[RMDB]
RNA sequence: GGGAACGACUCGAGUAGAGUCGAAAACCCUGUCUCCUCGGUUCUUCUUCGAUCCGGACCGGCUCAUCUCGGCAAGAGGCGGCAGUCCUCAGUACUCUUACUCUUUCCUAUAAAGAGGAGACUGCUGGUAAGAAGUACACUUCGGUGUACUUCUUACAAAAGAAACAACAACAACAAC
Reactivity to DMS in 0.01 (KOAc 150mM, MgCl2 10mM, bicine 150mM(pH8.5), 24C), signal-to-noise 1, nucleotides 027 to 126: c040c050c000u000g020u000c040u010c020c000u000c000g020g020u000u000c060u010u010c090u000u000c070g010a040u000c070c040g020g010a100c070c030g010g010c080u000c060a040u020c060u000c050g020g000c130a090a110g020a060g010g010c020g040g000c030a050g020u000c070c050u000c030a060g010u000a070c090u000c000u000u000a090c040u000c010u000u000u000c110c110u010a060u020a030a040a040g010a010g000g000a040g010a030c020u000g010c120u000g010
Reactivity to 2A3 in 0.01 (KOAc 150mM, MgCl2 10mM, bicine 150mM(pH8.5), 24C), signal-to-noise 2, nucleotides 027 to 126: c000c010c020u000g010u010c040u000c010c010u030c010g050g000u020u050c020u140u040c030u080u110c040g080a090u000c010c030g050g050a100c020c010g040g000c010u040c040a140u030c040u030c020g010g020c020a090a000g020a030g080g000c050g000g040c040a020g040u030c000c000u050c010a010g000u020a020c000u010c000u030u040a200c010u050c010u050u200u040c020c000u110a090u140a300a060a010g000a000g000g020a010g000a010c010u030g000c020u030g010
Chemical mapping of a 177-nucleotide RNA with DMS and 2A3. It was measured as part of the RMDB library 15KREP. DMS adducts were read by reverse transcription with MarathonRT. For 2A3 the reverse transcriptase was SuperScript II with manganese.